[RMDB]
RNA sequence: GGGAACGACUCGAGUAGAGUCGAAAACCAAUUGCUUUCGAGCAAUUGGAAAAACCGUAGGAAUGAUAGCUUUUGACGCUCGCGGAUUCGAAAGAGUCCGGACGAGCGAUAAGCUACCAUUCCUAAACGGAAAAACGAACGCCUUCGGGCGUUCGAAGUUUCCAUAAAGGUUCGCCUUUAUGGAAACAAAAGAAACAACAACAACAAC
Reactivity to 2A3 in 0.01 (KOAc 150mM, MgCl2 10mM, bicine 150mM(pH8.5), 24C), signal-to-noise 2, nucleotides 027 to 156: c000c000a000a000u000u010g000c020u060u020u130c180g070a020g000c000a000a000u000u010g010g080a010a100a060a030a060c000c010g000u010a010g010g000a000a000u010g000a020u010a000g000c030u160u090u100u120g180a090c020g010c000u000c010g110c000g000g000a000u000u000c010g020a080a110a130g010a020g000u000c010c020g020g090a060c010g000a020g000c030g000a000u030a000a000g000c000u000a000c000c000a010u000u000c000c000u000a020a000a000c020g010g020a160a070a010a000a000c010g000a000a000c000g010c000c020u070u070c300g120g030g000c010g000u000u000c000g000a000a020
An RNA of 207 nucleotides, treated with 2A3 and read out base by base. The reactions ran in a buffer of 150 mM KOAc, 10 mM MgCl2 and 150 mM bicine (pH 8.5), at 24 C. Reactivities are given for positions 27 through 156.